[RMDB]
RNA sequence: GGGAACGACUCGAGUAGAGUCGAAAAGGGGCAGCCUUUGCCUGUAUUGCUCCAUUCAUCUUGAUGGACAUGCUGAUUUUGUGGCAAGUUACUCGCUCAACCACAUUUAAUUCCACUACUCAAGAGCCGAAUACGGUGAUUUCGAUCACCGUAUUCGAAAAGAAACAACAACAACAAC
Reactivity to DMS in 0.01 (KOAc 150mM, MgCl2 10mM, bicine 150mM(pH8.5), 24C), signal-to-noise 3, nucleotides 027 to 126: g010g010g020g010c070a100g010c110c070u010u010u000g010c010c030u010g000u000a020u020u010g010c160u000c000c000a030u000u010c070a070u000c140u000u000g010a050u000g000g010a020c060a040u010g000c010u020g000a090u000u010u000u000g010u010g010g020c180a090a060g010u000u010a060c110u000c070g010c030u000c040a120a180c010c020a030c030a030u000u000u000a050a120u000u010c090c050a080c050u010a050c070u050c010a120a110g000a080g010c170
Reactivity to 2A3 in 0.01 (KOAc 150mM, MgCl2 10mM, bicine 150mM(pH8.5), 24C), signal-to-noise 4, nucleotides 027 to 126: g040g010g040g080c020a030g050c000c030u140u150u090g000c000c000u010g020u030a120u030u150g050c080u000c010c000a020u110u170c020a130u050c040u080u190g010a020u010g000g020a000c010a030u040g000c030u040g060a230u060u080u100u170g070u020g000g000c020a010a020g030u050u050a110c050u040c080g020c000u020c030a060a080c040c010a010c000a030u050u090u110a080a040u100u030c030c020a090c060u070a010c010u050c060a060a050g030a030g160c040
An RNA of 177 nucleotides, treated with DMS and 2A3 and read out base by base. For 2A3, 3,664 sequencing reads were counted. The RNA was probed in 150 mM KOAc, 10 mM MgCl2 and 150 mM bicine (pH 8.5) at 24 C. For DMS the reverse transcriptase was MarathonRT. It was measured as part of the RMDB library OK2TRN. The DMS profile rests on 2,399 reads.